[RMDB]
RNA sequence: GGGAACGACUCGAGUAGAGUCGAAAAAGCUCUAGCUCUAGGAAGAGGACUAGAGCUGACUGAAGCUCUUCAGUCAGCUCUCUUCGAUCUCCUCUCUGAUCGACUCUCUUCCUAGUCUCGAUCUCUCUCUCGAGACUGAGAAGGAGAAGCUAGAGGACCUUACGCCCUUAUUCGUAAGGGCGUAAGGAAAAGAAACAACAACAACAAC
Reactivity to 2A3 in 0.01 (KOAc 150mM, MgCl2 10mM, bicine 150mM(pH8.5), 24C), signal-to-noise 2, nucleotides 027 to 156: a000g040c000u000c000u000a000g000c000u000c000u030a000g010g000a020a020g000a010g010g060a050c080u120a030g010a000g020c010u000g000a000c000u010g010a010a030g140c150u130c270u300u000c010a000g000u000c000a000g000c000u000c000u000c010u070u020c010g020a020u000c000u070c050c010u090c060u010c110u090g010a030u010c010g050a050c010u000c000u000c000u130u000c000c000u000a010g000u000c000u000c000g060a070u020c030u000c000u000c030u000c000u000c060g150a110g090a150c110u110g020a060g000a070a030g010g010a010g010a020a000g010c000u000a000g000a000g010g000a000
The data come from the RNA Mapping Database (RMDB), library OK3TST. Structure probing data (2A3) for a 207-nucleotide construct. 2A3 adducts were read by reverse transcription with SuperScript II with manganese. The reactions ran in a buffer of 150 mM KOAc, 10 mM MgCl2 and 150 mM bicine (pH 8.5), at 24 C.